[RMDB]
RNA sequence: GGGAACGACUCGAGUAGAGUCGAAAACAGUGCCCCCAGUUGCAUAGCUCUGGGAGAUGACAUCCACCUUGAAUCUCCACAGUGGAACCUCUAGGGCUAUGACUUAGCGUCCAUUGUAAUGUUACCACCUGAAGUUGCACAAGGGGCCCUGGAUGAAGUAUUUAGUGCUAUUCGUAGCACUAAAUACAAAAGAAACAACAACAACAAC
Reactivity to DMS in 0.01 (KOAc 150mM, MgCl2 10mM, bicine 150mM(pH8.5), 24C), signal-to-noise 2, nucleotides 027 to 156: c000a060g010u000g020c020c000c010c000c000a140g030u000u000g070c010a040u000a050g010c010u000c000u000g020g040g010a020g010a030u000g030a070c040a120u000c010c040a030c010c030u000u010g000a160a130u020c080u000c150c060a120c230a050g040u010g000g010a020a290c040c040u010c010u000a040g000g000g000c010u000a020u010g000a090c070u000u000a060g050c180g010u000c040c070a130u020u020g000u010a120a070u000g000u000u000a080c040c040a110c030c040u010g010a070a180g010u010u000g000c040a040c080a080a080g030g020g040g060c020c040c020u000g000g000a120u000g010a150a210
Reactivity to 2A3 in 0.01 (KOAc 150mM, MgCl2 10mM, bicine 150mM(pH8.5), 24C), signal-to-noise 2, nucleotides 027 to 156: c060a010g000u010g030c000c000c000c030c070a060g040u130u080g000c000a000u020a030g030c000u000c010u020g100g040g000a020g000a060u090g010a030c000a040u060c000c000a000c020c040u040u080g080a220a110u090c080u110c160c020a020c020a040g010u020g010g230a300a300c040c020u000c000u010a000g000g020g000c000u020a010u030g000a000c010u020u100a020g030c040g030u040c020c020a120u060u040g040u130a040a040u040g030u080u100a110c010c060a050c010c020u050g040a090a000g050u040u030g030c050a040c040a080a100g010g000g000g000c000c000c000u020g000g010a070u070g060a140a010